[RMDB]
RNA sequence: GGGAACGACUCGAGUAGAGUCGAAAAAAUACUCAGUUAAACCGAUUAAAAAGUCUCUGUUAUGUCUAUACUUGCGGGAGAAGACUAUCCUAUCAAUGUAAUACUGUUCGAAAUGCUCAACAUACAAUAUAAUUUACGGAUUCGUCCGUAAAUUAUAAAAAGAAACAACAACAACAAC
Reactivity to DMS in 0.01 (KOAc 150mM, MgCl2 10mM, bicine 150mM(pH8.5), 24C), signal-to-noise 3, nucleotides 027 to 126: a110a050u000a070c040u000c010a050g010u010u010a070a090a110c090c060g000a150u010u030a040a100a100a100a080g000u000c050u000c040u000g010u000u000a030u020g020u000c110u000a070u010a080c030u010u000g020c100g010g000g000a060g020a090a050g010a040c030u000a090u010c030c040u000a060u010c040a030a070u000g010u010a060a060u010a100c090u000g010u000u000c090g000a070a080a070u000g000c110u010c080a020a020c060a030u010a120c090a010a060
Reactivity to 2A3 in 0.01 (KOAc 150mM, MgCl2 10mM, bicine 150mM(pH8.5), 24C), signal-to-noise 1, nucleotides 027 to 126: a000a000u160a040c020u020c030a030g020u030u010a020a090a050c000c030g000a040u150u230a000a030a060a030a120g010u030c020u040c000u020g080u200u100a170u130g020u000c020u040a140u010a230c050u060u060g000c050g040g000g000a090g040a140a000g010a010c010u000a030u050c000c000u090a070u110c030a060a030u070g000u040a060a050u010a120c020u070g090u180u030c020g060a070a020a060u110g070c000u010c070a000a090c000a080u140a020c000a050a040
Chemical mapping of a 177-nucleotide RNA with DMS and 2A3. Reactivities are rounded to 0.1 and cut off at 0 and 3. The RNA was probed in 150 mM KOAc, 10 mM MgCl2 and 150 mM bicine (pH 8.5) at 24 C. The data come from the RNA Mapping Database (RMDB), library OK2TRN.